RNA sequence: GGGAACGACUCGAGUAGAGUCGAAAAGCGUGGGCACCGCCCACAGCCGCCGUGGUGGGUUGGAACGGCUGCCCCAGCGGAGGUGGUGCAAGGACGCUGAGUUCAGUGCUUCGCCCGCUCCAUUGGCGUCUCUCGAUGAGUUCGCUCAUCGAGAGACAAAAGAAACAACAACAACAAC
Reactivity to 2A3 in 0.01 (KOAc 150mM, MgCl2 10mM, bicine 150mM(pH8.5), 24C), signal-to-noise 1, nucleotides 027 to 126: g020c030g000u170g050g020g000c030a030c150c110g040c050c010c000a010c000a010g000c000c010g000c020c040g020u030g020g020u100g040g000g100u070u140g090g070a200a090c120g000g020c000u020g030c000c000c020c010a000g000c000g020g000a030g000g100u090g000g040u070g000c050a110a150g020g010a020c000g050c070u060g040a040g120u200u270c010a010g010u010g040c040u040u030c070g040c020c010c000g000c030u000c030c000a160u070u080g030g030c040
Reactivity to DMS in 0.01 (KOAc 150mM, MgCl2 10mM, bicine 150mM(pH8.5), 24C), signal-to-noise 1, nucleotides 027 to 126: g010c020g040u010g020g010g010c000a120c090c150g000c030c000c090a020c010a050g010c010c040g020c000c020g030u010g000g010u010g000g020g020u000u000g010g000a150a020c110g050g000c120u000g010c140c030c010c010a140g040c030g020g000a040g020g000u010g010g020u010g000c070a160a100g000g020a100c010g010c100u010g000a230g030u000u030c030a040g020u020g000c050u010u000c040g000c000c000c030g000c000u000c020c030a170u010u010g020g010c150